Source information:
Conditions: 150 mM KOAc, 10 mM MgCl2 and 150 mM bicine (pH 8.5), 24 C. The record gives the reactivity of an RNA of 177 nucleotides to DMS and 2A3. DMS adducts were read by reverse transcription with MarathonRT.
RNA sequence: GGGAACGACUCGAGUAGAGUCGAAAAGAUAUGGAUCCUUGUAGGGAGCUCCACAUCGGAAACGAUGUGUGAGCGAAGAACUAUGGGAUCCUAAGUCAAAAUCUAAUGAUGCUUCGGCAUCAUUAGACCAUUGCUCAAUGUUCGCAUUGAGCAAUGGAAAAGAAACAACAACAACAAC
Reactivity to DMS in 0.01 (KOAc 150mM, MgCl2 10mM, bicine 150mM(pH8.5), 24C), signal-to-noise 3, nucleotides 027 to 126: g000a010u000a030u000g010g000a000u000c000c000u010u020g050u000a010g010g000g020a050g010c000u000c000c000a010c000a000u000c000g020g000a020a000a020c000g020a020u000g020u000g010u020g030a010g030c000g000a060a100g000a160a300c010u000a020u000g000g010g020a020u000c000c000u000a000a060g000u000c000a120a090a130a250u000c000u000a000a010u000g010a000u000g000c000u000u010c290g030g010c000a000u000c000a000u000u000a010g010a060
Reactivity to 2A3 in 0.01 (KOAc 150mM, MgCl2 10mM, bicine 150mM(pH8.5), 24C), signal-to-noise 2, nucleotides 027 to 126: g010a010u010a010u060g000g000a000u000c000c030u110u280g050u030a040g010g060g060a110g000c020u000c000c000a000c010a000u010c000g010g000a000a000a010c010g000a010u000g050u050g110u210g010a000g000c000g010a060a010g030a010a000c010u010a030u050g030g020g000a000u000c000c010u000a000a000g000u000c040a000a030a010a290u030c000u010a000a000u000g000a000u010g000c030u080u090c300g130g000c010a000u000c000a000u010u000a000g000a000